[RMDB]
RNA sequence: GGGAACGACUCGAGUAGAGUCGAAAAGCUGGUCCGGAUUGGCCCCAGCGAACACUUGACGAACGGUUAGUCCCGUCUUGUGGAUUAGGACGUUCUAGGUCCGGUCUGUCCCCUAGUUCGUCCGAAACAGCCUAUUAGGUUUCGACCUAAUAGGCUGAAAAGAAACAACAACAACAAC
Reactivity to DMS in 0.01 (KOAc 150mM, MgCl2 10mM, bicine 150mM(pH8.5), 24C), signal-to-noise 5, nucleotides 027 to 126: g020c010u000g000g010u030c010c020g000g020a150u030u050g000g000c150c130c020c010a040g020c030g010a100a110c030a020c020u000u010g000a020c000g000a130a100c150g000g020u030u060a100g010u000c060c020c010g010u000c030u020u010g010u020g000g020a110u030u040a090g010g000a040c000g000u010u000c000u010a010g010g020u010c090c110g010g000u030c180u020g000u040c070c050c000c000u010a010g000u010u010c000g000u030c000c000g000a070a080a200
Reactivity to 2A3 in 0.01 (KOAc 150mM, MgCl2 10mM, bicine 150mM(pH8.5), 24C), signal-to-noise 7, nucleotides 027 to 126: g000c000u010g000g040u060c020c030g100g120a280u110u250g090g020c050c030c030c010a000g020c000g000a050a020c010a000c010u020u030g010a000c000g030a160a040c050g040g150u220u160a040g110u300c020c030c000g000u010c000u010u020g000u020g040g050a040u020u160a060g010g000a000c000g000u010u000c000u000a000g010g010u060c110c050g000g050u080c150u170g300u300c000c020c000c000u000a000g000u000u010c000g000u000c000c000g010a010a010a010
Chemical mapping of a 177-nucleotide RNA with DMS and 2A3. The 2A3 profile rests on 5,429 reads. The reactions ran in a buffer of 150 mM KOAc, 10 mM MgCl2 and 150 mM bicine (pH 8.5), at 24 C. It was measured as part of the RMDB library OK1LIB. For DMS, 12,647 sequencing reads were counted.